[RMDB]
RNA sequence: GGGAACGACUCGAGUAGAGUCGAAAAAGGCGAUCAGCAAGCUGCUGGAGCUGGGCGCCAAGGAAGCCACGCUGCUUGUCGACGGCCAAGAGCUCCUGGUGCCGGUCGAUCAGGUCCAAGUCGGAGAAAACUCACAUGACUUCGGUCAUGUGAGUUUAAAAGAAACAACAACAACAAC
Reactivity to DMS in 0.01 (KOAc 150mM, MgCl2 10mM, bicine 150mM(pH8.5), 24C), signal-to-noise 1, nucleotides 027 to 126: a150g010g000c020g020a090u010c020a030g030c000a100a130g010c080u010g020c090u000g010g000a100g030c000u000g000g000g030c050g000c010c010a090a140g000g000a110a080g030c020c050a140c180g010c030u000g010c040u000u000g000u000c010g000a100c090g000g050c020c080a120a100g000a170g040c070u010c020c010u000g020g030u000g000c010c000g000g000u000c050g010a080u000c100a030g000g000u000c010c030a060a110g000u000c050g000g030a230g000a120

An RNA of 177 nucleotides, treated with DMS and read out base by base. The reactions ran in a buffer of 150 mM KOAc, 10 mM MgCl2 and 150 mM bicine (pH 8.5), at 24 C. The DMS profile rests on 1,163 reads. It was measured as part of the RMDB library OK2TRN. Values cover nucleotides 27 to 126.